[RMDB]
RNA sequence: GGGAACGACUCGAGUAGAGUCGAAAAGAAAGGGACCCAGUGCGCCCCACGCAGCCAGUCGGCCCCAGGCAUGCUUUUGCAUGCCCGACUGAGGGGAGCUGCGGCACUGAGGGGAGGUCCCGAAAGACACUACUAGCUGGUUCGCCAGCUAGUAGUGAAAAGAAACAACAACAACAAC
Reactivity to DMS in 0.01 (KOAc 150mM, MgCl2 10mM, bicine 150mM(pH8.5), 24C), signal-to-noise 3, nucleotides 027 to 126: g010a120a110a220g010g020g000a020c000c000c020a020g000u000g000c030g000c050c030c020c030a300c040g000c000a010g030c000c020a060g010u000c010g000g000c080c020c020c200a160g000g000c000a000u000g000c000u000u010u000u010g020c020a010u000g010c000c000c010g000a040c040u000g010a140g010g010g030g000a250g010c010u000g010c000g020g010c010a020c010u000g010a140g010g020g040g020a190g010g000u000c000c010c010g000a030a060a090g030a220
Reactivity to 2A3 in 0.01 (KOAc 150mM, MgCl2 10mM, bicine 150mM(pH8.5), 24C), signal-to-noise 1, nucleotides 027 to 126: g060a050a090a040g010g000g000a010c080c040c030a000g050u020g020c000g110c030c110c010c000a000c000g010c020a000g020c040c010a010g010u010c030g060g020c020c010c000c030a000g010g000c000a010u030g000c020u090u280u300u300g000c010a000u000g010c000c000c000g010a000c010u040g020a060g050g030g000g040a020g000c000u020g010c040g060g020c020a000c000u040g020a090g020g020g030g020a020g000g010u010c020c000c000g020a030a000a000g010a000